[RMDB]
RNA sequence: GGGAACGACUCGAGUAGAGUCGAAAAGAUAUGGAUGGUAGCGAUAAGCUGAGGUCGGAAACGACCUUCAGCUUUUGACGCUGAGAGUCCUAAGUCAAAGUGUGUUACUGUUCGCAGUAACACACAACAGAGCGAUGUAGUUCGCUACAUCGCUCUGAAAAGAAACAACAACAACAAC
Reactivity to DMS in 0.01 (KOAc 150mM, MgCl2 10mM, bicine 150mM(pH8.5), 24C), signal-to-noise 3, nucleotides 027 to 126: g000a020u010a180u010g000g000a010u000g010g010u010a020g010c000g010a200u000a020a020g010c000u000g010a030g000g010u010c000g020g010a080a070a130c010g000a000c000c000u010u020c010a010g030c000u000u000u010u010g000a170c050g000c010u000g010a130g000a240g000u000c000c000u000a020a120g010u000c030a090a090a190g000u000g010u000g010u000u010a000c000u010g000u010u030c250g010c010a010g040u010a000a010c000a000c040a000c000a040a150
Reactivity to 2A3 in 0.01 (KOAc 150mM, MgCl2 10mM, bicine 150mM(pH8.5), 24C), signal-to-noise 1, nucleotides 027 to 126: g010a020u100a000u110g000g010a000u050g100g120u220a010g010c000g020a120u030a200a020g030c010u010g000a010g000g000u010c000g000g020a010a060a050c000g000a000c000c020u040u100c000a000g000c020u000u000u010u040g000a000c020g020c040u020g040a080g030a020g250u000c000c000u010a060a000g030u000c110a140a060a060g010u000g010u000g000u040u010a010c020u020g100u080u090c300g000c130a000g030u000a000a000c000a000c010a000c000a000a010
Source: RMDB library TTRDEL, as collected in RNAgym. This 177-nucleotide RNA was probed chemically with DMS and 2A3. Values cover nucleotides 27 to 126. The 2A3 profile rests on 2,018 reads.